[RMDB]
RNA sequence: GGGAACGACUCGAGUAGAGUCGAAAAGAUCUCGUACGAGUUCGAGUACACGUGAGUGAGUGAGAGUGAACUCGAUCUCGUACUCGUGAGAUCACGUGUGAGAGAACGUGUUCUCGUGUACACGUGAUCACGAGUGUACGAGAACUCACGAUCGAACUAAAACACAAGCAUUCGUGCUUGUGUUUUAAAAAGAAACAACAACAACAAC
Reactivity to 2A3 in 0.01 (KOAc 150mM, MgCl2 10mM, bicine 150mM(pH8.5), 24C), signal-to-noise 9, nucleotides 027 to 156: g090a100u040c020u010c020g010u020a010c020g010a010g020u000u000c010g000a000g000u030a010c110a020c070g040u050g030a060g010u140g020a040g010u120g060a120g030a050g130u180g150a100a050c010u010c020g010a050u010c000u000c000g000u000a000c000u000c000g010u030g050a120g000a050u020c010a000c000g000u010g000u010g020a130g000a000g000a060a030c150g110u120g120u190u000c000u010c000g050u140g050u100a000c000a000c010g000u000g000a010u020c000a010c000g010a010g020u120g070u050a010c000g000a010g000a070a060c010u010c000a010c010g020a050u030c020g000a010a010c000
Reactivity to DMS in 0.01 (KOAc 150mM, MgCl2 10mM, bicine 150mM(pH8.5), 24C), signal-to-noise 4, nucleotides 027 to 156: g010a080u010c010u000c010g020u000a090c060g000a100g030u000u000c020g020a170g020u000a080c030a110c040g030u010g010a110g020u000g010a110g030u010g020a210g030a190g000u010g020a100a080c020u000c020g000a130u000c000u000c000g000u000a020c000u000c000g020u000g000a120g030a080u000c010a010c000g000u000g020u000g010a150g010a070g010a050a070c090g000u010g000u010u000c000u000c010g010u000g040u000a030c000a020c010g020u010g010a050u000c010a040c020g010a060g020u000g000u000a020c000g000a090g010a060a130c020u000c020a040c040g000a190u000c020g000a080a110c080